[RMDB]
Source: RMDB library OK2TRN, as collected in RNAgym.
This 177-nucleotide RNA was probed chemically with 2A3 and DMS.
For 2A3 the reverse transcriptase was SuperScript II with manganese.
RNA sequence: GGGAACGACUCGAGUAGAGUCGAAAAUCGCAGUAAGGGUUUUGCACCCUGAUCACCACUGGGCUCCCCCAGAUUAGGGGGACUAGGAGGAGGGACUAGAAGGGGCCUCUUUGCACUCUGCCCUGUCUGCUAAAUAAUUUUUCGAAAUUAUUUAGCAAAAAGAAACAACAACAACAAC
Reactivity to 2A3 in 0.01 (KOAc 150mM, MgCl2 10mM, bicine 150mM(pH8.5), 24C), signal-to-noise 2, nucleotides 027 to 126: u050c000g000c030a000g080u120a040a040g010g010g030u030u100u300u300g030c070a210c020c000c000u000g030a010u060c000a020c050c000a010c020u040g020g090g060c090u060c030c000c000c010c000a030g040a250u140u300a110g000g000g010g020g020a000c030u040a010g000g030a040g000g030a040g040g100g080a030c090u080a100g040a210a030g110g020g060g000c000c000u050c000u070u030u050g000c020a020c000u080c040u050g020c000c030c000u000g060u020c060
Reactivity to DMS in 0.01 (KOAc 150mM, MgCl2 10mM, bicine 150mM(pH8.5), 24C), signal-to-noise 5, nucleotides 027 to 126: u000c090g010c060a060g010u010a110a030g000g000g010u000u010u020u010g010c140a110c020c000c010u000g000a090u000c090a120c030c050a130c060u000g010g010g010c150u000c020c000c010c010c020a170g010a180u010u000a120g020g010g010g000g000a030c050u000a050g000g000a140g000g000a060g020g000g010a080c080u010a080g010a140a060g010g000g010g000c040c050u000c030u000u000u000g010c040a100c090u000c060u000g000c010c000c010u010g000u000c120
Overview:
The RNA was probed in 150 mM KOAc, 10 mM MgCl2 and 150 mM bicine (pH 8.5) at 24 C.